Chemical mapping of a 177-nucleotide RNA with DMS and 2A3. For 2A3, 4,356 sequencing reads were counted. For DMS, 2,160 sequencing reads were counted. The RNA was probed in 150 mM KOAc, 10 mM MgCl2 and 150 mM bicine (pH 8.5) at 24 C. Reactivities are given for positions 27 through 126. The data come from the RNA Mapping Database (RMDB), library TTRDES.
RNA sequence: GGGAACGACUCGAGUAGAGUCGAAAAAAAGAUAUGGAAAUUCUCUAGCGUGCUCAUCGAUCAUACAAUGAAGUAAUCGGAAACGAUUAUCAAAGUGUAUGGGAGAGUCGGGAUUUCCUAAGUCAAACCUCAGUAUGUAGUUCGCUACAUACUGAGGAAAAGAAACAACAACAACAAC
Reactivity to DMS in 0.01 (KOAc 150mM, MgCl2 10mM, bicine 150mM(pH8.5), 24C), signal-to-noise 3, nucleotides 027 to 126: a080a070a090g000a030u000a300u010g020g000a030a000a030u010u000c020u000c120u000a160g080c290g020u010g020c000u000c010a270u000c190g010a090u010c020a010u010a010c010a070a040u000g000a250a150g000u000a010a000u000c010g000g010a160a100a160c000g010a010u000u000a020u010c030a050a160a090g000u010g010u000a000u000g010g000g000a090g010a030g000u010c090g000g010g000a010u000u000u000c000c000u000a040a130g010u020c020a080a100a110
Reactivity to 2A3 in 0.01 (KOAc 150mM, MgCl2 10mM, bicine 150mM(pH8.5), 24C), signal-to-noise 3, nucleotides 027 to 126: a000a010a060g060a040u120a050u170g020g050a040a000a030u160u000c090u020c080u170a200g170c120g280u300g060c030u010c070a280u300c120g070a060u020c010a010u010a020c000a010a090u130g020a160a010g050u020a000a000u000c000g000g020a030a060a030c000g000a000u030u010a060u220c050a080a070a000g150u030g000u030a010u010g000g000g020a070g000a000g000u030c040g000g000g000a000u000u010u010c000c000u020a070a040g070u040c030a080a030a130